[RMDB]
RNA sequence: GGGAACGACUCGAGUAGAGUCGAAAAAGGCGGGAGUAUGCGCCCACCUGUCCAGGGAUGAAGAUUACACAUGUUUCAAAGUUAGGUAGUUUAAAAUAUUAGUUGUGACCUUAACAGUUAGCUAAGAUCUGAAAAUUAAUCCUAGUGGGUAUAGUGCCGACGAAAUACGAUUCGUCGUAUUUCGUCGAAAAGAAACAACAACAACAAC
Reactivity to DMS in 0.01 (KOAc 150mM, MgCl2 10mM, bicine 150mM(pH8.5), 24C), signal-to-noise 2, nucleotides 027 to 156: a020g000g050c030g030g020g010a090g030u000a120u010g050c080g000c010c000c000a090c000c010u010g020u000c030c030a140g010g000g010a070u000g000a120a070g010a150u000u000a080c060a010c080a140u000g000u020u010u000c060a140a060a210g010u000u000a050g010g000u010a050g020u000u010u000a060a050a080a130u000a060u000u010a080g010u000u000g000u020g000a040c000c020u010u000a090a080c030a290g010u010u000a140g050c010u000a020a050g010a010u000c010u000g010a070a060a010a110u000u000a050a080u000c010c010u010a060g040u000g020g000g020u010a090u020a080g020u000g010c100
Reactivity to 2A3 in 0.01 (KOAc 150mM, MgCl2 10mM, bicine 150mM(pH8.5), 24C), signal-to-noise 3, nucleotides 027 to 156: a000g000g010c010g000g050g030a030g040u090a070u180g100c060g050c000c000c000a000c000c000u030g060u090c020c050a040g000g030g030a030u050g040a050a080g010a100u120u220a040c050a030c000a040u090g040u040u070u030c140a180a130a030g000u020u040a010g000g010u000a040g040u080u090u240a120a130a070a060u240a100u130u060a010g060u030u050g050u040g030a050c010c000u020u020a000a050c000a040g020u070u070a010g030c020u050a030a050g010a050u030c020u040g050a090a070a040a060u120u070a100a010u010c000c000u010a020g040u080g010g000g050u070a080u080a120g060u080g070c010

Chemical mapping of a 207-nucleotide RNA with DMS and 2A3.
Reactivities are given for positions 27 through 156.
The reactions ran in a buffer of 150 mM KOAc, 10 mM MgCl2 and 150 mM bicine (pH 8.5), at 24 C.
For 2A3, 1,219 sequencing reads were counted.